[RMDB]
RNA sequence: GGGAACGACUCGAGUAGAGUCGAAAAGAUAUGGAGGCAUGUGUAGGAUAGCCUCUUGGAUUUAUAGGGUAUGUACAUCGGAAACGAUGUACUAAGCCCUAUUGUCAGAGGCCUUGCCUCCUAAGUCCGGCUACUAUAUCUUCGGAUAUAGUAGCCGAAAAGAAACAACAACAACAAC
Reactivity to DMS in 0.01 (KOAc 150mM, MgCl2 10mM, bicine 150mM(pH8.5), 24C), signal-to-noise 2, nucleotides 027 to 126: g000a120u000a300u000g000g000a000g020g000c000a020u000g010u020g010u020a120g000g000a290u010a110g010c000c000u000c010u000u020g020g010a040u000u000u010a010u000a010g000g020g000u010a300u030g000u000a000c000a000u000c000g010g000a140a140a260c000g010a030u000g020u000a000c020u000a080a160g000c000c000c000u000a000u000u000g010u020c000a020g000a000g000g010c000c050u000u000g000c000c010u020c000c000u010a060a090g000u000c030
Reactivity to 2A3 in 0.01 (KOAc 150mM, MgCl2 10mM, bicine 150mM(pH8.5), 24C), signal-to-noise 2, nucleotides 027 to 126: g060a050u210a080u210g000g000a000g000g040c000a040u050g150u100g140u300a180g190g300a270u210a080g000c020c020u000c070u050u110g070g000a030u190u300u090a030u040a000g000g000g000u050a050u250g010u000a020c010a010u000c020g000g030a010a050a010c020g020a010u000g000u000a000c010u000a040a000g020c000c000c000u010a000u000u020g000u020c020a000g000a010g010g000c000c010u030u020g030c000c000u000c000c000u020a060a010g040u000c010